[RMDB]
RNA sequence: GGGAACGACUCGAGUAGAGUCGAAAAGAUAUGGAAACAGUAGGGAGCUCCCACUCGGAAACGAGUGGAAGAGCGACGAUCUAUGGGUUUCCUAAGUCAAACAAUCACCGCUUCGGCGGUGAUUGAAGUUAAAGAGCAUGUUCGCAUGCUCUUUAACAAAAGAAACAACAACAACAAC
Reactivity to 2A3 in 0.01 (KOAc 150mM, MgCl2 10mM, bicine 150mM(pH8.5), 24C), signal-to-noise 2, nucleotides 027 to 126: g000a000u030a000u050g000g020a010a010a020c030a100g060u030a000g030g000g010a020g010c000u020c000c010c000a000c000u000c000g000g000a010a000a000c010g000a000g020u000g050g050a190a190g020a000g010c000g200a030c000g010a000u000c000u000a050u100g300g040g040u010u000u000c000c000u000a000a000g000u000c020a100a000a150c010a020a000u000c010a010c000c000g050c020u030u090c300g240g000c020g000g000u010g000a000u000u000g000a000a000
Reactivity to DMS in 0.01 (KOAc 150mM, MgCl2 10mM, bicine 150mM(pH8.5), 24C), signal-to-noise 3, nucleotides 027 to 126: g000a030u010a030u010g000g010a010a010a010c000a180g010u000a010g010g020g010a000g020c010u000c010c010c000a010c010u000c020g010g000a000a010a020c000g010a030g010u000g000g010a040a050g010a020g030c000g020a060c300g010a020u010c000u000a000u000g010g030g020u000u000u010c000c000u000a000a130g000u000c000a150a120a300c010a000a000u000c000a010c000c000g020c000u000u010c300g050g010c000g000g000u000g000a000u000u000g000a090a120